This 177-nucleotide RNA was probed chemically with DMS. For DMS the reverse transcriptase was MarathonRT. For DMS, 720 sequencing reads were counted. The RNA was probed in 150 mM KOAc, 10 mM MgCl2 and 150 mM bicine (pH 8.5) at 24 C.
RNA sequence: GGGAACGACUCGAGUAGAGUCGAAAACUGGUAAAUCCCGGUCAAUCCAACAAGGAGAUGUUGACGUAAUAGUGGUACCAACUCGUGAGUUACGUAAUUCGUGGCGCCGCCGCGGGUUUGCGGCUUAGACAGGGAAUGCGUUCGCGCAUUCCCUGUCAAAAGAAACAACAACAACAAC
Reactivity to DMS in 0.01 (KOAc 150mM, MgCl2 10mM, bicine 150mM(pH8.5), 24C), signal-to-noise 1, nucleotides 027 to 126: c120u000g030g000u000a130a170a140u010c050c010c010g000g040u000c050a110a040u000c000c020a100a100c230a140a130g000g050a250g020a030u000g000u030u000g020a060c050g020u010a050a050u000a060g010u010g010g010u010a080c010c060a050a060c130u000c120g050u000g000a070g000u000u010a080c030g050u000a030a090u000u000c010g000u000g010g010c100g010c070c250g010c000c030g060c020g000g000g050u000u000u000g000c020g000g000c010u000u000a070